[RMDB]
RNA sequence: GGGAACGACUCGAGUAGAGUCGAAAAUGCAGGGGGCUUGUUGGGAGUAAAAAUGUGUCUUCAGAGACUGUGAACAUCACCAUCACUCAAGGUGAGACAUGUGCCACCCUGGAAUGCCCAGGGACGCCGUUAUACAUUUCUUCGGAAAUGUAUAACGAAAAGAAACAACAACAACAAC
Reactivity to 2A3 in 0.01 (KOAc 150mM, MgCl2 10mM, bicine 150mM(pH8.5), 24C), signal-to-noise 3, nucleotides 027 to 126: u140g040c030a010g000g000g000g000g020c000u020u030g030u020u070g050g030g010a030g030u110a020a020a060a050a050u150g050u010g010u060c020u090u080c060a030g020a040g030a260c040u050g030u060g120a050a040c020a090u060c000a000c010c010a030u070c050a030c050u080c060a090a070g120g000u020g020a010g000a010c010a020u090g020u050g050c030c020a130c030c000c010u000g010g020a100a060u160g040c000c020c010a010g020g020g000a010c060g030c040
Reactivity to DMS in 0.01 (KOAc 150mM, MgCl2 10mM, bicine 150mM(pH8.5), 24C), signal-to-noise 7, nucleotides 027 to 126: u000g010c030a050g000g010g000g010g020c060u000u000g010u010u010g010g010g010a120g020u000a040a080a050a080a050u010g010u000g010u000c020u010u000c140a130g010a100g010a050c100u000g010u000g000a080a090c140a080u010c030a040c050c020a160u010c090a070c090u010c110a080a090g000g010u000g000a050g000a060c080a030u000g000u010g000c020c080a150c010c000c010u010g000g000a120a110u010g000c080c000c000a110g000g000g000a090c120g010c150